[RMDB]
RNA sequence: GGGAACGACUCGAGUAGAGUCGAAAACUGGGGUCACAAUUUUGUUACUUGGAAAUGGCCCACCCUCAUGUGUUGACAGUAGAAACCAGAAUGGACUUCAAAACAGAGGAGAGGAAGGCUCUGGUGAUCUGUAACAACUGUUCGCAGUUGUUACAGAAAAAGAAACAACAACAACAAC
Reactivity to 2A3 in 0.01 (KOAc 150mM, MgCl2 10mM, bicine 150mM(pH8.5), 24C), signal-to-noise 1, nucleotides 027 to 126: c040u010g040g000g010g050u030c030a040c020a170a060u070u050u100u230g220u230u120a140c060u060u080g100g020a020a110a100u070g020g000c040c000c010a010c000c000c000u020c040a100u160g050u000g040u090u070g060a070c080a030g070u080a070g160a240a090a010c000c010a000g050a080a030u130g010g030a040c000u000u000c020a000a070a090a120c050a070g040a040g130g050a090g040a010g000g030a000a010g040g010c000u020c050u000g000g000u020g070a090
Reactivity to DMS in 0.01 (KOAc 150mM, MgCl2 10mM, bicine 150mM(pH8.5), 24C), signal-to-noise 2, nucleotides 027 to 126: c080u000g010g000g000g000u000c020a050c080a090a060u010u000u000u010g020u000u020a090c140u010u000g000g000a080a110a040u000g010g010c030c000c020a170c110c010c000u000c030a130u000g030u010g000u000u000g020a050c110a020g040u010a070g000a140a150a080c030c030a110g040a080a140u010g000g000a110c040u000u000c000a040a050a070a090c060a070g000a040g010g000a080g020a150g000g010a050a070g000g000c060u000c040u000g000g000u000g000a150